[RMDB]
RNA sequence: GGGAACGACUCGAGUAGAGUCGAAAAGAUAUGGAGUAUACAAGCAUCGAUCGUGGGUUCGGAAACGAACCGUAACAUCGGGAGCUUGAUACUCCUAAGUCAAAACCACGCAGUUCGCUGCGUGGAAGAUCAUAUGCCCGUUCGCGGGCAUAUGAUCAAAAGAAACAACAACAACAAC
Reactivity to DMS in 0.01 (KOAc 150mM, MgCl2 10mM, bicine 150mM(pH8.5), 24C), signal-to-noise 1, nucleotides 027 to 126: g000a060u010a300u010g000g000a020g010u000a000u000a030c010a010a000g000c000a080u010c000g010a010u000c180g060u010g000g010g020u010u020c010g010g000a090a060a150c000g010a000a010c000c000g060u000a060a040c040a040u000c000g010g010g000a040g010c000u010u000g000a040u000a010c000u000c000c000u000a010a090g010u010c010a060a170a140a110c000c010a020c000g070c000a000g040u000u000c230g040c000u010g030c010g030u000g000g000a060a030
Reactivity to 2A3 in 0.01 (KOAc 150mM, MgCl2 10mM, bicine 150mM(pH8.5), 24C), signal-to-noise 1, nucleotides 027 to 126: g020a010u070a030u150g000g010a010g030u050a010u050a230c000a010a000g000c000a050u090c050g010a020u010c160g000u080g060g030g000u010u000c010g000g000a020a050a030c010g000a000a010c050c030g020u060a010a010c000a010u010c000g010g020g030a190g020c000u000u010g010a000u000a010c000u000c000c000u010a050a000g020u010c000a020a040a100a000c000c020a010c010g000c020a000g050u150u220c220g090c170u000g000c000g040u010g020g010a000a010